[RMDB]
RNA sequence: GGGAACGACUCGAGUAGAGUCGAAAACUGGAUCCGAAGCCUCUAGAACGAUAAUAUAGGCACUCCAUACCCUACUCCGACUCAAUACGUCCCCGUCGUACAGAAUGGUAACAUAUCUCUCCAAAUAAAAACGUUGUCUCGUUCGCGAGACAACGAACAACCACGGUUACUUCGGUAACCGUGGUUGAAAAGAAACAACAACAACAAC
Reactivity to 2A3 in 0.01 (KOAc 150mM, MgCl2 10mM, bicine 150mM(pH8.5), 24C), signal-to-noise 2, nucleotides 027 to 156: c050u060g020g020a040u090c050c040g090a100a020g030c010c030u060c050u060a070g020a210a060c100g060a080u090a270a060u070a070u050a120g040g000c030a020c050u010c020c000a030u070a120c000c000c030u030a050c030u020c020c030g060a020c000u000c060a070a110u110a120c050g010u000c000c000c000c020g000u050c020g000u050a050c040a050g110a150a080u110g020g040u110a120a030c000a070u090a120u040c000u000c000u010c070c040a030a120a010u130a150a050a010a000a000c030g000u010u010g000u020c010u010c000g040u020u030c100g000c010g140a010g000a000c000a000a000c000g000a010a000
This 207-nucleotide RNA was probed chemically with 2A3. For 2A3 the reverse transcriptase was SuperScript II with manganese. The reactions ran in a buffer of 150 mM KOAc, 10 mM MgCl2 and 150 mM bicine (pH 8.5), at 24 C. Source: RMDB library M2RFPK, as collected in RNAgym. The 2A3 profile rests on 1,056 reads. Reactivities are given for positions 27 through 156.